[RMDB]
RNA sequence: GGGAACGACUCGAGUAGAGUCGAAAACCAGCAAAGGGUACAACUGUGACCAUGUUGGCUAUAGAAAUGGGUUCUUGAUAACUGGAAGGACAUAGGCGAUGGAUGGCCCUUGAACUAGGAUGGCAACCUCUACCGAAGGGUUCGCCCUUCGGUAGAGAAAAGAAACAACAACAACAAC
Reactivity to DMS in 0.01 (KOAc 150mM, MgCl2 10mM, bicine 150mM(pH8.5), 24C), signal-to-noise 2, nucleotides 027 to 126: c010c000a080g000c130a100a110a080g010g010g000u000a040c020a080a100c110u010g000u020g020a070c000c030a060u000g020u000u000g020g000c050u020a090u000a050g000a040a060a110u000g010g010g060u010u000c070u010u000g000a130u000a030a100c070u000g000g030a110a060g010g000a040c060a080u000a050g010g010c040g000a060u000g000g000a090u000g010g010c020c040c000u010u000g000a040a060c080u000a040g000g000a050u000g020g000c040a070a060c130
Reactivity to 2A3 in 0.01 (KOAc 150mM, MgCl2 10mM, bicine 150mM(pH8.5), 24C), signal-to-noise 2, nucleotides 027 to 126: c000c010a000g040c050a040a040a080g110g050g000u130a140c010a150a030c090u060g080u160g140a110c030c000a010u000g020u090u090g010g000c020u040a010u050a230g140a030a150a060u160g060g070g000u050u040c030u060u150g050a100u040a170a060c060u050g070g030a000a070g070g020a000c030a030u070a150g040g000c040g120a110u090g080g010a030u050g020g020c020c000c000u000u080g050a060a020c020u030a100g050g010a060u060g020g000c000a030a020c000